[RMDB]
RNA sequence: GGGAACGACUCGAGUAGAGUCGAAAAUUACGGAUCUCAUUGCUUGACCCAAAGUUUCACGAUAGAUAUUUGGAUUUCUAGAGAUAUGGUCACUAUAGGUACGGUAGACAUUGAGAAGGUCCAAGUAUACCAAGUUCACCUUCGGGUGAACUUGGUAAAAAGAAACAACAACAACAAC
Reactivity to DMS in 0.01 (KOAc 150mM, MgCl2 10mM, bicine 150mM(pH8.5), 24C), signal-to-noise 1, nucleotides 027 to 126: u000u000a100c200g000g020a050u000c050u000c030a090u000u000g000c060u000u000g000a140c000c020c000a050a030a070g020u030u050u000c090a050c270g010a150u000a020g020a080u010a000u000u000u000g020g000a070u020u020u000c020u000a270g000a030g000a140u020a010u020g000g000u000c000a000c050u010a120u080a100g000g040u000a140c120g040g000u000a020g010a090c010a090u010u000g000a020g010a090a000g040g010u080c020c000a000a000g050u000a050
Reactivity to 2A3 in 0.01 (KOAc 150mM, MgCl2 10mM, bicine 150mM(pH8.5), 24C), signal-to-noise 2, nucleotides 027 to 126: u240u120a090c140g000g040a130u000c020u060c060a030u100u200g000c020u080u060g120a120c000c000c000a000a110a000g010u000u010u010c150a080c120g160a080u170a180g030a000u020a140u030u090u020g060g000a110u000u180u000c000u030a040g020a020g050a200u010a030u210g080g060u140c030a000c010u020a050u040a030g130g100u170a030c070g000g000u000a030g050a120c010a030u080u070g020a070g090a210a130g060g000u030c000c000a030a010g020u020a000